Source: RMDB library TTRDEL, as collected in RNAgym.
An RNA of 177 nucleotides, treated with 2A3 and DMS and read out base by base.
RNA sequence: GGGAACGACUCGAGUAGAGUCGAAAAGAUAUGGACUAUGAGCGAUAAGCUACCUUCGGAAACGAAGGAAUAGCUUUUGACGCUCACGUCCUAAGUCAAAAGAAAUGAUGCUUCGGCAUCAUUUCAAGAAUGUUGUAUCCUUCGGGAUACAACAUUCAAAAGAAACAACAACAACAAC
Reactivity to 2A3 in 0.01 (KOAc 150mM, MgCl2 10mM, bicine 150mM(pH8.5), 24C), signal-to-noise 3, nucleotides 027 to 126: g010a000u050a020u100g010g000a000c010u020a100u280g000a010g020c020g080a120u040a300a000g000c010u000a020c000c000u010u020c010g000g000a070a020a030c010g000a000a050g040g000a030a090u060a000g000c000u040u060u090u210g110a050c010g020c010u020c000a010c000g010u000c000c010u010a050a010g020u020c040a060a070a070a090g010a000a000a000u010g010a010u010g000c020u070u110c290g160g000c010a000u000c000a000u000u000u000c000a000a040
Reactivity to DMS in 0.01 (KOAc 150mM, MgCl2 10mM, bicine 150mM(pH8.5), 24C), signal-to-noise 3, nucleotides 027 to 126: g000a020u000a170u000g000g000a010c000u000a140u000g000a020g010c010g020a070u020a010a020g000c000u000a030c010c000u010u000c010g010g000a070a020a100c000g010a020a030g000g000a070a050u000a000g000c000u010u010u010u020g010a240c040g000c000u010c000a020c280g010u000c000c000u000a010a100g000u000c030a100a070a130a150g000a020a020a010u000g000a010u000g010c000u000u020c230g030g000c000a010u000c000a000u000u000u000c010a050a070